[RMDB]
RNA sequence: GGGAACGACUCGAGUAGAGUCGAAAAAGUGACUACCGGCAGAGUCGCAAUGCGGCAGCCUUAAUUGCAGGCUGUGGGCUUAAACUGAAGGUUGACUACCGCCCUAUUGGGUUGUAUGCUGGUGUGGAGGGGUAGUUGAAUUCGUUCAACUACCCCUAAAAGAAACAACAACAACAAC
Reactivity to DMS in 0.01 (KOAc 150mM, MgCl2 10mM, bicine 150mM(pH8.5), 24C), signal-to-noise 2, nucleotides 027 to 126: a120g000u000g010a130c010u000a010c020c000g010g010c010a120g020a080g010u010c010g020c080a180a150u010g010c030g020g030c010a010g010c000c000u000u000a140a120u010u010g020c240a030g000g040c000u020g010u000g020g040g040c050u010u000a070a070a130c110u000g020a110a120g000g030u010u000g010a060c070u000a110c050c100g000c000c030c010u030a140u010u010g020g020g010u010u010g010u010a090u000g000c000u000g000g000u000g020u010g000g010

Chemical mapping of a 177-nucleotide RNA with DMS. Reactivities are given for positions 27 through 126.